[RMDB]
RNA sequence: GGGAACGACUCGAGUAGAGUCGAAAAGUAGUGCUCGAGAGGGAGGCUGUCUCGCAGAGCUUUUAGAUCUUCUGAUCUUUCCCUCCUCCAUAUCGCUUAUGCGUCAAGCGUUAGACGCAUAAUUAAAUCUAAUUAGGUGCUUCGGCACCUAAUUAGAAAAAGAAACAACAACAACAAC
Reactivity to DMS in 0.01 (KOAc 150mM, MgCl2 10mM, bicine 150mM(pH8.5), 24C), signal-to-noise 1, nucleotides 027 to 126: g000u010a100g020u010g020c050u010c060g010a040g020a240g010g010g010a060g010g010c040u000g020u010c020u000c020g030c100a080g030a250g010c010u000u000u010u020a000g020a000u010c010u000u030c250u000g000a040u000c000u000u010u000c000c000c000u000c010c020u000c010c030a090u010a050u010c020g010c230u000u000a000u000g010c000g010u000c000a060a180g040c150g010u000u010a060g010a000c030g000c000a000u000a030a010u010u010a030a060a080